[RMDB]
RNA sequence: GGGAACGACUCGAGUAGAGUCGAAAAGGGGUCGGACCUUGGAUUUAUAAAGGACAACUUUACAGGAGUUGCAAUGAUGUACACUGAAGCCUCCACGGUGUAUUGAGCAACUCCUGUAAAGCUAAUCCUUUAUUGUCAGGUCCGACGGAGGCACCCAGUAGCAAGAAGUGUUCGCACUUCUUGCUACAAAAGAAACAACAACAACAAC
Reactivity to 2A3 in 0.01 (KOAc 150mM, MgCl2 10mM, bicine 150mM(pH8.5), 24C), signal-to-noise 2, nucleotides 027 to 156: g070g020g000g020u010c010g010g010a000c010c030u070u130g150g020a090u160u300u190a200u240a030a000a000g010g010a010c010a130a220c250u010u000u020a010c000a010g000g010a010g000u010u040g000c050a080a300u150g040a020u120g040u000a000c000a000c000u020g070a080a050g040c000c030u030c030c020a030c010g000g010u000g000u010a000u010u080g020a010g010c000a000a000c010u000c000c000u000g000u000a030a000a000g010c010u000a000a000u000c000c020u000u000u000a020u010u050g010u010c020a000g000g010u000c000c000g000a000c000g000g020a000g000g000c000a020c010c020c000a020